[RMDB]
RNA sequence: GGGAACGACUCGAGUAGAGUCGAAAAGCUGGUGCCCUGUGCUGCGGUGGGACGUCAAGGUCAGUUCGUAUGCUGCGGGAAAUGGCCGCCGAGGAGGUAGGGCUUACGCUUGCGUUUGUCUGUUAUAGCAGGGGAUUAAUUUCGAUUAAUCCCCUGCAAAAGAAACAACAACAACAAC
Reactivity to DMS in 0.01 (KOAc 150mM, MgCl2 10mM, bicine 150mM(pH8.5), 24C), signal-to-noise 1, nucleotides 027 to 126: g040c010u000g040g030u010g030c020c030c000u000g020u030g020c000u010g000c070g010g080u020g000g000g000a050c080g040u100c070a180a210g010g010u030c040a080g000u010u010c170g050u050a070u010g000c030u010g000c000g000g000g000a110a040a020u010g030g000c040c020g000c020c000g000a100g000g000a070g010g000u010a060g030g010g010c020u000u000a020c140g010c040u000u000g030c100g030u020u030u070g000u030c110u000g000u000u000a080u030a180
Structure probing data (DMS) for a 177-nucleotide construct. It was measured as part of the RMDB libraries RFM100 and RFMREP.